[RMDB]
RNA sequence: GGGAACGACUCGAGUAGAGUCGAAAAUGAAAUCAAAAUUAGAGAAGUGAAGGCUGAGAUGGUAAUGGUAAUGAAGGUAGGAUAUUGUCACUGGUUUACGGUAACCACCACCACCAAUAUAAAAAAACGCUAUACUAUACUUCGGUAUAGUAUAGCGAAAAGAAACAACAACAACAAC
Reactivity to DMS in 0.01 (KOAc 150mM, MgCl2 10mM, bicine 150mM(pH8.5), 24C), signal-to-noise 2, nucleotides 027 to 126: u030g000a060a110a080u000c080a050a080a070a050u010u000a110g000a080g000a050a020g020u010g020a060a110g000g010c020u000g030a070g020a060u000g010g040u010a100a050u000g010g000u000a040a040u000g010a060a090g000g020u000a040g020g020a050u000a040u010u000g000u000c060a060c100u010g000g020u020u020u000a060c100g010g000u000a030a010c100c050a070c040c020a020c040c050a030c080c060a020a060u020a030u010a010a020a050a040a060a060a170
Reactivity to 2A3 in 0.01 (KOAc 150mM, MgCl2 10mM, bicine 150mM(pH8.5), 24C), signal-to-noise 2, nucleotides 027 to 126: u070g000a010a020a040u140c100a040a100a070a110u210u200a090g030a010g020a140a030g070u100g060a080a000g050g000c030u010g040a020g010a080u070g010g000u050a060a030u060g050g000u030a030a040u070g050a050a010g030g000u040a030g060g030a040u030a020u080u120g050u010c050a030c110u020g040g000u010u100u090a030c040g000g000u020a040a010c010c000a020c000c010a010c000c000a000c000c040a060a030u180a010u140a070a150a000a010a000a000a010